Background: Source: RMDB library RNAMAK, as collected in RNAgym. An RNA of 207 nucleotides, treated with DMS and 2A3 and read out base by base. 2A3 adducts were read by reverse transcription with SuperScript II with manganese. The RNA was probed in 150 mM KOAc, 10 mM MgCl2 and 150 mM bicine (pH 8.5) at 24 C. For 2A3, 2,456 sequencing reads were counted.
RNA sequence: GGGAACGACUCGAGUAGAGUCGAAAAUGCUCGUUCGCGAGCAAAGAUAGCGUACUACUCAGUCGAGGAUCGUGCGCAUGCCAGACUUCCCAAAUAGGAAGUCGGUAAUUUGCGUCACGGGAGACUGAGUAUCGCCGUGCUACCGGUUCGCCGGUAACUUGGUUCUUUUUUUCGAAAAAGAACCAAGAAAAGAAACAACAACAACAAC
Reactivity to DMS in 0.01 (KOAc 150mM, MgCl2 10mM, bicine 150mM(pH8.5), 24C), signal-to-noise 1, nucleotides 027 to 156: u000g030c010u000c010g010u010u000c260g000c010g000a030g010c000a070a020a110g030a130u000a030g030c010g020u010a090c120u000a020c000u000c010a040g030u000c010g000a200g050g020a070u000c010g070u000g010c000g000c030a070u000g010c000c010a190g050a010c010u000u020c000c000c010a030a120a230u010a080g020g010a040a010g010u010c000g000g030u000a000a050u000u000u000g020c020g000u000c010a020c000g030g050g000a100g040a080c010u000g010a030g000u000a020u000c020g080c010c030g020u000g030c010u000a020c000c030g000g000u000u000c250g040c020c000g000g000u000a000a040
Reactivity to 2A3 in 0.01 (KOAc 150mM, MgCl2 10mM, bicine 150mM(pH8.5), 24C), signal-to-noise 3, nucleotides 027 to 156: u070g000c000u000c000g030u080u050c220g020c040g130a010g010c010a090a000a000g110a040u260a020g000c010g010u100a130c050u000a000c010u030c000a000g000u000c000g020a160g030g010a000u040c000g010u000g000c000g000c000a000u010g000c000c010a080g000a000c000u000u020c010c010c000a220a240a150u160a090g000g000a000a000g010u020c020g000g000u080a160a200u070u130u050g030c040g100u240c090a000c000g000g030g000a020g010a010c000u000g000a020g000u000a000u010c000g000c000c000g090u110g020c040u030a020c010c000g020g020u050u030c160g040c060c000g010g000u010a020a050